Source: RMDB library M2RFPK, as collected in RNAgym. Structure probing data (2A3 and DMS) for a 207-nucleotide construct. The DMS profile rests on 7,755 reads. 2A3 adducts were read by reverse transcription with SuperScript II with manganese. For DMS the reverse transcriptase was MarathonRT.
[RMDB]
RNA sequence: GGGAACGACUCGAGUAGAGUCGAAAAGGGUGAUGUCUCCUAACCUUUAUCAAUAGGGGCACUCGGUCGUGCUGUGGGUAGAAAUUUUAUUUCGUGCCUACCUUAGACGCUUGUCGUCGGGAGUAUGUGGGACUGAUGAACUUCGGUUCAUCAGUAAACUUUUAGACACUUUCGAGUGUCUAAAAGUAAAAGAAACAACAACAACAAC
Reactivity to 2A3 in 0.01 (KOAc 150mM, MgCl2 10mM, bicine 150mM(pH8.5), 24C), signal-to-noise 6, nucleotides 027 to 156: g050g000g010u050g030a140u080g060u030c040u030c030c000u030a070a080c010c000u120u240u130a260u210c090a110a100u060a080g000g000g010g010c010a010c000u040c020g040g040u030c030g010u020g060c080u050g020u050g010g000g010u020a020g110a000a030a020u140u270u140u170a110u030u110u080c040g030u060g020c000c000u020a040c000c010u020u070a050g000a010c000g000c070u150u300g140u300c010g000u000c010g000g030g000a030g040u090a090u140g060u110g010g030g050a010c000u010g000a000u000g000a000a010c000u050u050c200g040g000u000u000c000a000u000c000a000g000u000a020a010
Reactivity to DMS in 0.01 (KOAc 150mM, MgCl2 10mM, bicine 150mM(pH8.5), 24C), signal-to-noise 3, nucleotides 027 to 156: g020g010g010u000g010a110u010g000u000c000u000c030c010u000a120a090c020c030u000u000u010a190u030c080a100a140u000a060g010g040g000g030c040a070c010u000c030g020g060u000c030g010u000g020c030u000g010u010g020g020g000u010a270g010a020a020a070u000u010u010u000a110u010u040u010c010g020u000g040c020c010u000a030c020c080u010u000a130g000a060c030g040c040u000u010g010u010c020g010u000c010g000g000g000a130g010u000a050u010g030u000g000g020g010a060c010u000g000a010u000g010a020a010c000u000u000c300g050g010u000u000c000a010u000c000a030g010u000a030a100